The record gives the reactivity of an RNA of 177 nucleotides to DMS and 2A3. Values cover nucleotides 27 to 126. The DMS profile rests on 2,295 reads. The reactions ran in a buffer of 150 mM KOAc, 10 mM MgCl2 and 150 mM bicine (pH 8.5), at 24 C. It was measured as part of the RMDB library OK2TRN.
RNA sequence: GGGAACGACUCGAGUAGAGUCGAAAACGGCCCGGCCAUCGAUACGAUCAGCGUGUAGGCCGCGCCGAUCACGGCCUCUGAUCUACGAGGCCAGGCCGACACUGAGGAUCGAUCUGGAUCACAGAUACACUCUGGCAUCAUUCGUGAUGCCAGAGUGAAAAGAAACAACAACAACAAC
Reactivity to DMS in 0.01 (KOAc 150mM, MgCl2 10mM, bicine 150mM(pH8.5), 24C), signal-to-noise 3, nucleotides 027 to 126: c010g000g000c000c020c010g020g020c000c000a080u000c000g020a140u010a050c260g000a010u000c000a000g030c300g030u000g020u010a030g020g000c000c000g040c040g000c170c150g010a010u000c040a130c010g010g000c020c020u000c010u000g000a030u000c010u000a060c020g010a020g000g000c000c000a000g010g010c000c010g000a070c090a070c070u000g030a080g010g000a020u000c030g010a140u010c140u000g020g010a050u000c040a100c020a080g000a120u020a180
Reactivity to 2A3 in 0.01 (KOAc 150mM, MgCl2 10mM, bicine 150mM(pH8.5), 24C), signal-to-noise 3, nucleotides 027 to 126: c010g010g000c000c020c000g020g000c020c040a300u050c020g100a120u020a120c050g010a010u010c020a000g050c110g200u210g150u230a020g010g030c040c020g020c030g090c050c050g010a050u160c020a020c010g000g000c000c010u030c020u000g000a030u000c000u030a010c010g000a000g010g020c010c010a000g010g000c010c010g000a000c010a020c020u090g070a140g110g010a030u020c020g040a090u080c060u190g100g020a030u060c010a000c000a050g000a010u080a070